This 177-nucleotide RNA was probed chemically with 2A3 and DMS.
The RNA was probed in 150 mM KOAc, 10 mM MgCl2 and 150 mM bicine (pH 8.5) at 24 C.
Values cover nucleotides 27 to 126.
It was measured as part of the RMDB library OK1LIB.
The 2A3 profile rests on 2,732 reads.

[RMDB]
RNA sequence: GGGAACGACUCGAGUAGAGUCGAAAAGAACCCUACCGCAUGACCCGACCUUGACAAAAGUGCAGUAGGGGUAAAUUCUCCCGAUUCGGGGCGGAGGAGAAAAGAAAGAAGAAAAGAAAAAGAAAAAGAUACCAUGACCAUUCGUGGUCAUGGUAUCAAAAGAAACAACAACAACAAC
Reactivity to 2A3 in 0.01 (KOAc 150mM, MgCl2 10mM, bicine 150mM(pH8.5), 24C), signal-to-noise 3, nucleotides 027 to 126: g110a030a040c000c000c000u010a010c010c040g000c010a020u050g040a050c020c000c010g000a030c020c110u130u240g000a020c050a030a090a020a000g000u000g000c000a000g000u000a010g020g000g000g020u040a050a050a000u060u010c010u000c000c000c010g010a010u080u040c010g010g010g030g010c070g040g040a120g030g060a010g040a020a020a000a010g150a040a130a000g110a050a010g050a020a080a000a000g180a030a110a020a020a000g140a040a040a050a000a000
Reactivity to DMS in 0.01 (KOAc 150mM, MgCl2 10mM, bicine 150mM(pH8.5), 24C), signal-to-noise 2, nucleotides 027 to 126: g040a060a070c010c000c000u000a010c000c020g000c000a010u000g000a100c000c010c000g050a020c110c290u030u020g060a200c290a030a060a150a200g000u000g010c000a000g030u000a010g010g000g000g000u020a000a070a130u020u010c090u000c000c040c000g000a160u010u020c000g010g000g000g000c060g030g010a100g020g000a000g020a000a010a090a170g000a040a100a110g000a050a070g000a060a090a110a090g000a000a050a040a060a130g010a110a030a090a080a100